[RMDB]
RNA sequence: GGGAACGACUCGAGUAGAGUCGAAAAAUAUUGAAGAAGAAUGUGACCGCUCGCGAUUUCUUGAUCUCAGUGAGCGUAACGAACUCCGAUGAGGCUGGACGCACUAGAUCCCACACCUGAAGUAUUAAUCCUGCAUAUUAUUCGUAAUAUGCAGGAUAAAAGAAACAACAACAACAAC
Reactivity to 2A3 in 0.01 (KOAc 150mM, MgCl2 10mM, bicine 150mM(pH8.5), 24C), signal-to-noise 9, nucleotides 027 to 126: a000u230a080u090u200g060a070a050g040a060a010g040a030a120u100g020u050g060a040c040c030g000c000u010c010g020c020g040a060u020u130u050c080u080u270g110a150u020c050u020c060a040g020u040g090a010g000c010g000u010a020a000c000g030a030a010c020u020c020c000g050a060u090g020a020g040g000c030u040g020g010a010c010g000c020a020c040u020a030g000a100u030c000c000c000a040c000a020c010c050u100g060a100a010g050u070a080u100u140a060
Reactivity to DMS in 0.01 (KOAc 150mM, MgCl2 10mM, bicine 150mM(pH8.5), 24C), signal-to-noise 9, nucleotides 027 to 126: a070u030a060u010u020g000a110a100g010a070a070g020a110a070u020g010u010g010a140c210c020g010c020u010c030g020c040g000a060u010u010u020c060u030u010g010a060u010c050u010c070a120g030u010g000a030g000c000g000u000a070a040c100g010a100a080c050u010c030c030g000a070u010g000a080g000g010c040u010g000g000a040c040g000c020a030c060u010a080g000a100u010c010c000c010a100c150a060c130c060u010g010a040a080g000u020a070u020u010a140

The record gives the reactivity of an RNA of 177 nucleotides to 2A3 and DMS.
For DMS, 28,300 sequencing reads were counted.
Values are in units of 0.01, from 0 to 300, in steps of 10.
For 2A3 the reverse transcriptase was SuperScript II with manganese.